[RMDB]
RNA sequence: GGGAACGACUCGAGUAGAGUCGAAAAUUAAAGGUGGUGGUGGAGGAGGUACGCCUCCAGCUGCUCAGCCGACGUACCGCACACACGCCUUUUCGGCAUAGAGCAGCAAUACGGUAUCCAUAAAAAAGUUAAAUCAAUAGUUCGCUAUUGAUUUAACAAAAGAAACAACAACAACAAC
Reactivity to 2A3 in 0.01 (KOAc 150mM, MgCl2 10mM, bicine 150mM(pH8.5), 24C), signal-to-noise 3, nucleotides 027 to 126: u100u040a110a030a040g100g000u040g010g000u040g010g050u030g000g010a030g000g000a010g000g000u020a010c040g030c000c000u010c000c000a010g000c000u000g000c000u000c020a040g000c010c010g010a050c010g010u020a020c010c020g030c030a040c000a010c000a030c120g100c030c030u130u120u050u030c010g000g010c020a050u090a050g000a000g010c010a000g000c000a000a030u090a030c000g020g020u060a030u060c020c020a040u220a050a120a010a000a010a000
Reactivity to DMS in 0.01 (KOAc 150mM, MgCl2 10mM, bicine 150mM(pH8.5), 24C), signal-to-noise 7, nucleotides 027 to 126: u010u010a060a090a100g010g020u000g010g020u000g000g040u000g010g000a050g010g000a060g010g010u000a030c070g010c010c000u000c010c010a080g010c000u000g000c000u000c000a070g020c010c000g010a090c150g000u000a020c050c020g000c110a110c200a120c210a080c130g000c050c130u000u000u000u000c020g010g000c010a160u010a060g000a000g010c000a020g000c010a040a040u000a030c100g010g010u000a060u010c020c030a080u030a010a050a060a080a080a090

Chemical mapping of a 177-nucleotide RNA with 2A3 and DMS. As a SHAPE reagent, 2A3 marks flexible, mostly unpaired nucleotides at the ribose 2'-OH.